[RMDB]
Overview: An RNA of 207 nucleotides, treated with 2A3 and read out base by base.

RNA sequence: GGGAACGACUCGAGUAGAGUCGAAAAUAUGAGGGUCAAAAGGAUUGUGGAGAAAAGCGAAGGGUUGACAGCCCAAUCCUUGAGGGCUGGAUGAUCAAGAACAUGGCGAAAUAGGAGGGCGCUGAAGCCAGGGCUUCCUGGAGCGGGAAGCGACAUCGCGCAGUAGAAGUUUCGACUUCUACUGCGCAAAAGAAACAACAACAACAAC
Reactivity to 2A3 in 0.01 (KOAc 150mM, MgCl2 10mM, bicine 150mM(pH8.5), 24C), signal-to-noise 1, nucleotides 027 to 156: u300a090u060g030a060g000g020g000u080c080a080a040a100a000g040g000a050u080u050g010u110g060g030a040g010a060a050a040a030g060c040g060a050a040g080g010g010u070u070g010a040c000a000g030c010c000c000a000a040u040c020c000u040u030g040a080g000g020g000c040u020g000g000a070u090g000a010u050c050a040a010g000a050a020c050a080u050g030g010c020g010a050a020a020u040a040g090g000a000g000g010g000c040g000c050u080g030a040a020g060c050c010a020g000g040g020c010u040u000c010c000u040g030g010a070g010c040g000g010g000a000a000g000c010g030a020c000a070u100c070